[RMDB]
RNA sequence: GGGAACGACUCGAGUAGAGUCGAAAAGAUAUGGACCAUCGGGAGCCAAACCAUCGGAAACGAUGGCACUGGCGUUGAUCGAGUGGUCCUAAGUCAAAACGUCAAUUAUGUUCGCAUAAUUGACGAAGGUAUCACUAAUGUUCGCAUUAGUGAUACCAAAAGAAACAACAACAACAAC
Reactivity to DMS in 0.01 (KOAc 150mM, MgCl2 10mM, bicine 150mM(pH8.5), 24C), signal-to-noise 6, nucleotides 027 to 126: g000a030u000a020u010g000g010a010c000c000a090u000c010g000g000g000a020g020c000c000a030a180a250c010c000a000u000c000g020g000a020a010a020c000g020a010u000g000g010c060a040c300u000g020g010c000g030u000u010g010a040u010c010g000a010g020u010g010g000u000c000c000u000a000a050g000u000c010a100a040a080a200c020g000u000c000a010a010u000u000a010u000g000u000u000c200g010c010a010u000a010a010u000u000g010a010c000g000a010a020
Reactivity to 2A3 in 0.01 (KOAc 150mM, MgCl2 10mM, bicine 150mM(pH8.5), 24C), signal-to-noise 7, nucleotides 027 to 126: g000a000u010a000u040g000g000a000c000c000a010u010c010g000g000g000a010g000c000c000a040a070a030c010c000a010u000c000g000g010a010a000a000c000g000a000u000g030g000c020a030c270u080g010g000c010g020u120u010g000a000u000c010g010a100g300u140g010g000u000c000c000u000a000a000g000u000c000a020a040a050a080c010g000u010c000a000a000u000u000a010u010g060u040u080c300g000c170a000u000a000a000u000u000g010a000c000g000a020a020

Annotation:
The record gives the reactivity of an RNA of 177 nucleotides to DMS and 2A3. 2A3 adducts were read by reverse transcription with SuperScript II with manganese. The reactions ran in a buffer of 150 mM KOAc, 10 mM MgCl2 and 150 mM bicine (pH 8.5), at 24 C.